The data come from the RNA Mapping Database (RMDB), library OK2TRN. The record gives the reactivity of an RNA of 177 nucleotides to DMS and 2A3. The DMS profile rests on 1,267 reads. For DMS the reverse transcriptase was MarathonRT.
[RMDB]
RNA sequence: GGGAACGACUCGAGUAGAGUCGAAAACGCCGGCUAUCAGCAUCGCCAGGCCGACAUCCCAGCGGGUGACGCGCAGCAGCCGGCGCCGCUGAGGGCCCGGAUCGGGAUGCCCGUGCCGGUCGCGCGCCCACACCCCUACAUUCGUGUAGGGGUGUGGAAAAGAAACAACAACAACAAC
Reactivity to DMS in 0.01 (KOAc 150mM, MgCl2 10mM, bicine 150mM(pH8.5), 24C), signal-to-noise 2, nucleotides 027 to 126: c120g010c010c010g000g010c010u000a090u000c140a120g010c020a030u000c070g000c030c030a100g000g000c000c000g020a060c110a100u000c070c000c020a150g010c000g000g030g040u000g000a080c050g030c180g050c050a170g040c120a080g020c010c010g000g000c010g000c020c050g000c040u000g000a070g030g000g000c120c020c070g000g010a080u010c180g000g030g010a030u010g000c000c070c100g000u000g020c000c010g020g000u020c060g030c050g010c130g010c030
Reactivity to 2A3 in 0.01 (KOAc 150mM, MgCl2 10mM, bicine 150mM(pH8.5), 24C), signal-to-noise 1, nucleotides 027 to 126: c030g030c000c000g000g020c040u070a060u250c170a070g050c020a020u010c030g180c150c040a080g090g000c000c040g070a030c020a080u040c000c020c000a010g070c060g030g060g070u080g030a060c020g040c030g030c070a100g030c040a010g010c050c000g040g000c000g030c010c010g030c040u030g050a300g010g070g000c020c020c010g030g020a130u220c080g030g060g000a030u050g010c000c040c040g050u070g000c000c000g060g000u080c000g030c010g000c000g010c040
About this RNA: The RNA was probed in 150 mM KOAc, 10 mM MgCl2 and 150 mM bicine (pH 8.5) at 24 C. For 2A3 the reverse transcriptase was SuperScript II with manganese.